[RMDB]
RNA sequence: GGGAACGACUCGAGUAGAGUCGAAAAGGUUGUGGCAAGUCUACACUGCUCAAGCUGAUACUCGGUCUCGAGCAAGCGCAGCAAGGGUCUAUUACAGUUGGCGGAAAAGAAUCAAGACUGGUUCAGGUGAUGCGUUUACGUUCGCGUAAACGCAUCAAAAAGAAACAACAACAACAAC
Reactivity to DMS in 0.01 (KOAc 150mM, MgCl2 10mM, bicine 150mM(pH8.5), 24C), signal-to-noise 1, nucleotides 027 to 126: g000g020u000u000g050u000g010g000c060a060a040g020u000c080u000a060c140a140c070u000g030c010u000c060a070a110g010c060u000g010a170u000a060c100u000c030g000g010u000c050u000c050g000a050g000c020a060a100g000c150g020c060a020g000c150a050a170g020g000g020u000c020u000a060u000u000a110c100a100g040u000u020g000g000c050g000g010a020a060a050a130g000a040a040u000c030a050a080g020a120c120u000g000g000u000u000c020a110g010g000